RNA sequence: GGGAACGACUCGAGUAGAGUCGAAAAGCAAUACGACCGCUCCAUAUCUGCCGAAUGAUGCCAAUGUAUGGUGCCUACUGUCCAACGUAACCGUUAAUCGCUGCCUUGGCGGCGAUUAACAAUCACAGGAGGCGAUCUAUUUCGAUAGAUCGCCUCCAAAAGAAACAACAACAACAAC
Reactivity to 2A3 in 0.01 (KOAc 150mM, MgCl2 10mM, bicine 150mM(pH8.5), 24C), signal-to-noise 2, nucleotides 027 to 126: g000c020a000a190u070a090c020g040a030c000c010g060c010u130c030c020a030u000a090u030c050u020g060c040c000g070a070a250u260g040a090u090g080c000c000a110a000u080g030u070a040u070g030g000u000g040c000c000u000a030c000u010g000u040c010c010a050a010c000g080u090a100a070c000c010g030u000u000a000a000u000c000g000c000u000g030c000c070u150u280g130g000c020g030g000c000g000a000u000u000a000a000c010a050a000u050c070a000c000a030
Chemical mapping of a 177-nucleotide RNA with 2A3. Conditions: 150 mM KOAc, 10 mM MgCl2 and 150 mM bicine (pH 8.5), 24 C.